[RMDB]
RNA sequence: GGGAACGACUCGAGUAGAGUCGAAAAUGUUCUGAUAAUAUUCUAGAACUUCUGGUACACGCUCAAAUAAGUUAAUCGUUGUCAUAAUAAGGUCAUCAAAAUCUAACGCUUCAUUACGCGACAAUUGAUUUUGAAUGAGGUUCGCCUCAUUCAAAAUAAAAGAAACAACAACAACAAC
Reactivity to DMS in 0.01 (KOAc 150mM, MgCl2 10mM, bicine 150mM(pH8.5), 24C), signal-to-noise 3, nucleotides 027 to 126: u000g010u000u000c000u010g000a070u000a100a240u000a180u000u010c030u020a050g000a040a020c000u010u000c050u000g000g020u000a070c070a050c090g000c070u000c060a040a070a130u000a070a100g010u000u010a060a060u010c060g000u010u000g030u010c030a070u010a060a060u000a050a050g010g010u010c060a060u000c080a080a050a080a110u020c120u000a060a080c170g020c040u000u010c130a070u000u000a010c160g020c060g020a060c120a040a040u000u000g000
Reactivity to 2A3 in 0.01 (KOAc 150mM, MgCl2 10mM, bicine 150mM(pH8.5), 24C), signal-to-noise 1, nucleotides 027 to 126: u140g000u030u000c000u020g080a000u090a300a130u190a300u210u000c080u180a010g020a020a000c000u050u060c060u110g000g120u110a020c080a020c060g070c020u020c020a110a130a180u280a210a080g120u140u170a180a050u160c040g000u060u130g150u160c030a000u000a130a020u080a050a030g000g060u030c050a020u000c000a080a190a000a090u050c090u060a110a060c020g000c030u050u010c020a120u040u110a030c030g010c000g080a030c050a030a090u020u110g050

Chemical mapping of a 177-nucleotide RNA with DMS and 2A3. It was measured as part of the RMDB library OK2TST. The RNA was probed in 150 mM KOAc, 10 mM MgCl2 and 150 mM bicine (pH 8.5) at 24 C. DMS (dimethyl sulfate) methylates the pairing face of unpaired adenines and cytosines.